An RNA of 207 nucleotides, treated with 2A3 and DMS and read out base by base. DMS adducts were read by reverse transcription with MarathonRT.
RNA sequence: GGGAACGACUCGAGUAGAGUCGAAAAGAGGGGUGGUAUAUUCUUUCUGGCUACUUCCUGCUGAGUGGAGGGUCAGAGGGUUCUUUGGUCUUGGGUUGAUUGUGGGAGUAAUGCCAUCUGUAGAUGUUUUUAGGUAAUUGUGAGAUGUCCAUGAUCAGCAUACUAUAGGAUUCGUCCUAUAGUAUGCAAAAGAAACAACAACAACAAC
Reactivity to 2A3 in 0.01 (KOAc 150mM, MgCl2 10mM, bicine 150mM(pH8.5), 24C), signal-to-noise 5, nucleotides 027 to 156: g060a010g010g060g010g010u080g010g040u070a110u050a070u160u090c040u050u140u020c020u010g020g000c010u050a190c010u300u080c020c030u080g070c100u130g120a070g040u170g020g040a010g010g010g000u030c040a030g010a010g010g010g010u080u040c050u050u090u080g020g010u030c000u020u040g000g000g030u020u080g050a050u050u090g020u060g030g030g010a040g040u070a050a040u060g010c030c020a050u000c050u060g060u060a020g020a090u020g050u060u070u030u070u080a050g000g030u060a070a060u070u070g020u030g030a070g000a050u060g030u050c040c020a040u080g040a070u180c050a010
Reactivity to DMS in 0.01 (KOAc 150mM, MgCl2 10mM, bicine 150mM(pH8.5), 24C), signal-to-noise 2, nucleotides 027 to 156: g010a080g020g010g010g040u000g020g060u000a080u000a100u000u000c050u000u010u000c020u000g020g000c030u000a110c010u000u000c010c010u010g020c110u030g010a150g030u000g000g010a030g010g020g030u000c030a030g010a070g040g030g010u000u000c060u000u000u000g000g010u000c040u000u000g020g000g000u010u000g010a160u000u020g020u000g040g000g010a150g010u000a070a110u000g030c040c000a050u010c040u000g030u000a080g010a080u010g020u000u000u000u000u000a050g000g010u010a040a090u000u000g020u010g000a090g000a130u000g010u000c010c020a070u000g010a160u000c050a240
High DMS reactivity at an A or C suggests that its Watson-Crick edge is free. The DMS profile rests on 7,440 reads.